[RMDB]
RNA sequence: GGGAACGACUCGAGUAGAGUCGAAAAUUUGCCUGAUAACGCACACACGCAGCAAUGGCGUAAGACGUAAUGCGAAAUCAAGCAGUUAGCGGGCUGUGGAUUGCAGCUUGGCCGGCAAAUGGAAUCACAACUUCAUUCCGUUCGCGGAAUGAAGUUGAAAAGAAACAACAACAACAAC
Reactivity to DMS in 0.01 (KOAc 150mM, MgCl2 10mM, bicine 150mM(pH8.5), 24C), signal-to-noise 1, nucleotides 027 to 126: u010u000u060g000c000c050u030g000a000u000a050a300c060g020c030a040c230a080c290a010c000g020c000a140g020c080a170a060u030g030g020c020g040u000a030a020g030a080c000g090u000a070a060u000g000c000g020a040a160a040u060c040a060a080g000c080a070g000u000u000a120g000c000g000g000g000c000u020g030u000g030g000a080u020u010g020c000a000g000c040u020u000g020g050c010c040g040g030c020a010a090a080u010g010g010a080a170u010c240a190
Reactivity to 2A3 in 0.01 (KOAc 150mM, MgCl2 10mM, bicine 150mM(pH8.5), 24C), signal-to-noise 1, nucleotides 027 to 126: u020u010u050g000c010c010u000g010a000u020a060a000c000g000c000a000c000a010c010a010c030g020c020a020g000c030a190a300u300g300g000c000g000u010a000a000g040a000c020g000u040a010a100u070g000c000g000a000a000a030u000c000a000a000g090c000a040g000u070u130a020g040c020g000g010g000c020u030g050u040g010g220a260u140u230g000c000a000g010c070u020u100g130g060c020c060g000g000c010a000a040a060u090g010g080a050a010u150c060a100
Structure probing data (DMS and 2A3) for a 177-nucleotide construct. The RNA was probed in 150 mM KOAc, 10 mM MgCl2 and 150 mM bicine (pH 8.5) at 24 C.